[RMDB]
RNA sequence: GGGAACGACUCGAGUAGAGUCGAAAAUAGGCAAAUCCGCAGAUCUAGCUGAAACAUGAGUGAUAACCGCGUCUUCGGACAAGGGAAGUUGCCUAAUCAUGCUCCCAAGAAAAACUUCUAAGCUUCACUGACUAACUUAAUUCGUUAAGUUAGUCAGAAAAGAAACAACAACAACAAC
Reactivity to DMS in 0.01 (KOAc 150mM, MgCl2 10mM, bicine 150mM(pH8.5), 24C), signal-to-noise 8, nucleotides 027 to 126: u010a020g000g010c020a030a070a120u000c020c030g010c070a070g010a070u010c090u020a140g000c030u000g010a100a080a080c090a090u010g000a110g010u010g000a110u020a080a210c070c080g000c280g000u000c020u000u030c060g010g000a030c130a070a290g010g000g000a020a040g000u000u000g000c020c020u010a020a080u020c140a080u020g010c100u010c000c000c000a100a100g010a040a040a050a100a060c080u010u020c030u020a100a100g000c080u000u000c100a220
Reactivity to 2A3 in 0.01 (KOAc 150mM, MgCl2 10mM, bicine 150mM(pH8.5), 24C), signal-to-noise 9, nucleotides 027 to 126: u050a000g010g000c010a020a000a120u010c010c010g000c030a010g020a070u040c060u160a040g060c020u060g040a070a110a030c070a120u230g070a070g130u130g060a110u070a170a050c040c030g010c010g010u000c010u010u030c050g040g000a030c050a070a080g070g000g010a020a020g030u020u020g000c000c000u020a030a040u100c050a020u140g030c010u020c010c000c000a010a020g060a010a060a010a010a000c030u080u040c040u100a120a070g030c030u070u070c050a030
Annotation: Source: RMDB libraries RFM100 and RFMREP, as collected in RNAgym. An RNA of 177 nucleotides, treated with DMS and 2A3 and read out base by base. For DMS the reverse transcriptase was MarathonRT. Conditions: 150 mM KOAc, 10 mM MgCl2 and 150 mM bicine (pH 8.5), 24 C.